[RMDB]
RNA sequence: GGGAACGACUCGAGUAGAGUCGAAAAGAUUAACUUGCUCCAUUAUUAUGGCGCUCGUAUCUCGCCUGACUUGAUUUGGAAAGCCACACCUUGGACCUGGUUAUUCGAUUGGUUCGGAGAUACUGGAUAGGAUAUCUCGAUUCGUCGAGAUAUCCUAAAAAGAAACAACAACAACAAC
Reactivity to 2A3 in 0.01 (KOAc 150mM, MgCl2 10mM, bicine 150mM(pH8.5), 24C), signal-to-noise 2, nucleotides 027 to 126: g010a030u130u150a030a070c040u020u030g000c010u000c040c020a010u080u180a120u300u140a040u160g000g000c030g010c020u020c020g020u000a040u000c030u000c030g050c000c020u030g000a050c000u160u200g060a050u090u100u190g090g020a010a060a020g000c000c020a060c000a030c070c030u030u220g030g000a040c030c010u030g000g030u030u020a100u110u060c040g060a090u010u140g070g030u100u160c010g010g010a020g000a020u060a080c060u050g050g030a050
Reactivity to DMS in 0.01 (KOAc 150mM, MgCl2 10mM, bicine 150mM(pH8.5), 24C), signal-to-noise 2, nucleotides 027 to 126: g000a140u000u010a110a090c070u000u000g000c020u000c000c010a010u000u020a130u010u010a100u020g000g000c090g020c030u000c090g010u000a060u000c010u000c030g010c130c020u000g000a060c060u000u000g020a120u000u020u010g010g000a050a090a130g010c000c010a040c120a080c060c080u000u010g000g010a070c060c040u000g000g010u000u000a100u000u000c020g010a060u010u000g000g010u000u000c090g010g020a050g000a070u010a040c020u000g010g000a300

The record gives the reactivity of an RNA of 177 nucleotides to 2A3 and DMS. 2A3 adducts were read by reverse transcription with SuperScript II with manganese. High 2A3 reactivity points to a flexible backbone, as in loops and unpaired stretches. The DMS profile rests on 2,125 reads. The data come from the RNA Mapping Database (RMDB), library OK2TRN.